[RMDB]
RNA sequence: GGGAACGACUCGAGUAGAGUCGAAAACUGCCCUGGAUGGAAGUACAGCCGUACUUCACCUCUACGGCUGUAGAGGCAUCCAGAUCGUGGUAGCGAUGUGAUGGCACUACUCGCGUAGUGCAGUGUGACGCGAGUCACACCAUCACGGCAGACCGCGCGAUGCUACAUAGUUCGCUAUGUAGCAUCGAAAAGAAACAACAACAACAAC
Reactivity to 2A3 in 0.01 (KOAc 150mM, MgCl2 10mM, bicine 150mM(pH8.5), 24C), signal-to-noise 2, nucleotides 027 to 156: c010u010g000c000c000c000u010g000g000a000u000g000g130a110a040g050u000a000c000a010g030c020c040g020u020a020c030u060u090c070a070c020c000u010c020u020a010c010g050g000c060u070g000u000a010g040a090g030g040c010a000u000c000c000a000g000a010u000c010g020u030g150g260u150a090g060c000g000a010u000g000u000g000a000u010g030g000c000a000c040u010a000c000u040c080g070c110g010u030a040g060u030g070c040a010g020u030g070u080g040a000c010g010c030g030a020g000u010c010a010c000a000c030c000a000u000c010a000c000g010g000c000a000g010a010c020c010g050c020g040
Reactivity to DMS in 0.01 (KOAc 150mM, MgCl2 10mM, bicine 150mM(pH8.5), 24C), signal-to-noise 1, nucleotides 027 to 156: c010u010g010c000c040c010u000g000g000a070u010g000g010a110a120g020u000a040c020a080g030c070c050g060u010a020c130u000u000c210a180c160c080u020c000u000a010c000g010g020c050u000g000u000a010g010a140g050g020c050a030u000c000c000a100g000a030u000c010g000u020g020g020u000a110g000c010g000a030u000g000u010g010a070u000g010g000c020a100c010u010a010c000u010c210g000c300g030u010a070g020u000g040c040a030g000u010g010u020g000a030c030g000c300g010a230g020u020c060a050c130a030c080c000a010u010c000a000c010g020g000c010a090g000a120c010c010g030c160g080